The record gives the reactivity of an RNA of 177 nucleotides to 2A3 and DMS. The reactions ran in a buffer of 150 mM KOAc, 10 mM MgCl2 and 150 mM bicine (pH 8.5), at 24 C. Values cover nucleotides 27 to 126. The data come from the RNA Mapping Database (RMDB), library OK2TST. The DMS profile rests on 14,143 reads.

RNA sequence: GGGAACGACUCGAGUAGAGUCGAAAAUUACAGGAUCUUUGUAACAUCGGGAUCGAUAAGAAGAAUAUGAUUAUUCGAUACAGUCCUGAAUUUUUCUUUAUCCACGAUGGUAAAGAGUUAAGUACUACAUUAUAAGAUGCUUCGGCAUCUUAUAAUGAAAAGAAACAACAACAACAAC
Reactivity to 2A3 in 0.01 (KOAc 150mM, MgCl2 10mM, bicine 150mM(pH8.5), 24C), signal-to-noise 6, nucleotides 027 to 126: u040u020a120c010a000g020g010a020u050c060u120u230u200g050u080a110a080c020a080u040c040g040g050g050a050u080c030g040a010u100a090a040g110a070a030g050a080a060u170a060u140g080a060u060u080a050u130u160c000g000a000u020a060c020a020g000u010c000c000u000g000a000a010u010u000u020u030u000c000u000u010u010a020u010c020c020a130c280g090a170u150g000g020u020a010a010a010g030a010g030u050u120a080a010g030u020a030c010u030a020
Reactivity to DMS in 0.01 (KOAc 150mM, MgCl2 10mM, bicine 150mM(pH8.5), 24C), signal-to-noise 9, nucleotides 027 to 126: u000u010a140c010a030g010g010a030u000c090u010u010u000g020u010a090a180c160a080u010c040g020g010g010a080u000c060g010a040u010a070a100g010a150a110g000a060a070u010a050u010g010a160u000u000a050u000u000c010g000a090u000a040c070a080g000u000c000c020u000g010a030a010u000u000u000u000u000c010u000u000u000a030u010c010c050a110c240g010a090u010g020g010u000a010a020a030g000a030g000u000u000a050a070g010u000a100c050u000a130